[RMDB]
RNA sequence: GGGAACGACUCGAGUAGAGUCGAAAAGCACGGAUGAUGGGUUAAUUAAAUCAGGAGAAUGCGAAAUGUCUGACCAUCCUACGAUUGCUCUUAUUGGUCCGGGGGCUAUCGGUACCACCAUCGCCGCACGAUGGAUAGCUUUCGAGCUAUCCAUCGUAAAAGAAACAACAACAACAAC
Reactivity to DMS in 0.01 (KOAc 150mM, MgCl2 10mM, bicine 150mM(pH8.5), 24C), signal-to-noise 2, nucleotides 027 to 126: g030c070a150c080g000g000a010u010g030a040u010g020g000g000u010u000a070a070u000u010a070a130a180u000c060a030g000g020a090g000a060a070u010g030c120g000a080a100a100u010g030u010c010u000g020a180c110c040a110u000c020c030u020a080c010g000a040u000u000g010c030u010c010u010u000a160u000u000g000g000u010c090c070g000g000g000g000g000c020u000a020u000c040g000g010u000a060c050c070a090c020c020a050u000c060g010c020c030g010c110
Reactivity to 2A3 in 0.01 (KOAc 150mM, MgCl2 10mM, bicine 150mM(pH8.5), 24C), signal-to-noise 2, nucleotides 027 to 126: g100c020a000c080g060g010a140u030g000a020u010g050g030g070u100u150a080a080u130u130a110a160a160u080c060a000g020g030a040g050a130a000u110g030c030g100a090a080a040u110g050u050c030u050g060a060c030c010a070u060c010c020u020a050c010g000a020u020u060g000c000u000c020u060u080a160u070u120g040g000u070c080c000g000g000g000g010g000c000u000a000u040c000g060g020u060a060c010c080a020c010c000a070u030c020g000c000c000g060c000